[RMDB]
RNA sequence: GGGAACGACUCGAGUAGAGUCGAAAAGUGGCAGGGCCAGACGAGGUGCAGCUGGCACAGACGGCUGGUGGGCGCGUGGACUCCUUCUUCCUGGUGGCUGCCCCCCGAUGCCGGUGCAUAGCGGCGGGUAACAACCGCGAUUCGUCGCGGUUGUUACAAAAGAAACAACAACAACAAC
Reactivity to 2A3 in 0.01 (KOAc 150mM, MgCl2 10mM, bicine 150mM(pH8.5), 24C), signal-to-noise 1, nucleotides 027 to 126: g180u090g040g000c040a040g030g080g040c020c000a020g020a000c040g040a070g080g000u060g050c020a010g000c040u070g080g070c050a000c000a050g230a040c050g020g000c000u070g000g070u190g110g010g020c080g000c060g080u070g000g040a070c020u050c030c000u080u050c000u170u080c000c050u030g020g000u010g060g090c000u060g000c030c060c000c000c000c000g020a030u070g010c010c000g110g000u040g020c060a090u060a070g020c000g040g000c000g070g010
Reactivity to DMS in 0.01 (KOAc 150mM, MgCl2 10mM, bicine 150mM(pH8.5), 24C), signal-to-noise 2, nucleotides 027 to 126: g000u010g020g000c050a090g010g020g010c020c030a080g020a080c180g010a030g000g030u000g000c030a180g010c030u000g000g000c040a140c150a060g020a300c110g000g000c040u010g000g000u000g000g010g010c080g030c100g010u000g030g000a100c040u000c030c020u000u010c100u000u020c120c020u000g020g020u000g010g000c030u010g000c010c020c010c010c020c020g000a080u010g010c020c020g020g000u020g000c150a100u000a110g010c000g000g000c020g010g000

Background:
Structure probing data (2A3 and DMS) for a 177-nucleotide construct. DMS adducts were read by reverse transcription with MarathonRT. The RNA was probed in 150 mM KOAc, 10 mM MgCl2 and 150 mM bicine (pH 8.5) at 24 C. The 2A3 profile rests on 1,161 reads.